RNA sequence: GGGAACGACUCGAGUAGAGUCGAAAAUGAUACAAGCCCUGUCCUCCCAUGACGCUGGUGAGGGGCAGUGUGGGGAGGAAGGGAAAGCAGGAGAAGGGCUGGGUCGGCUCAGGGACUCACAGGACACACGAUGCAUAUCUUUCGAGAUAUGCAUCGUAAAAGAAACAACAACAACAAC
Reactivity to DMS in 0.01 (KOAc 150mM, MgCl2 10mM, bicine 150mM(pH8.5), 24C), signal-to-noise 2, nucleotides 027 to 126: u000g020a130u010a140c160a130a160g000c000c010c020u000g000u000c000c000u000c020c000c010a140u020g000a090c030g020c030u000g000g010u010g030a070g010g000g020g000c010a010g000u020g010u010g010g010g020g000a050g020g000a300a060g030g000g000a030a050a080g010c110a070g000g010a100g000a130a100g000g000g000c060u000g010g010g030u000c050g020g000c100u000c050a050g000g000g010a070c060u010c060a070c090a080g010g010a100c160a100c250
Reactivity to 2A3 in 0.01 (KOAc 150mM, MgCl2 10mM, bicine 150mM(pH8.5), 24C), signal-to-noise 1, nucleotides 027 to 126: u080g010a020u050a180c090a140a040g020c010c020c040u020g300u090c010c000u010c000c020c020a040u110g130a030c030g000c010u010g000g090u220g060a080g010g000g020g000c000a000g000u000g030u080g030g050g010g000a000g000g040a020a010g000g040g030a020a060a000g030c040a000g050g060a040g020a070a070g050g000g020c050u090g000g010g030u040c040g050g000c010u000c030a030g050g000g000a020c020u020c040a050c040a020g100g030a020c030a010c000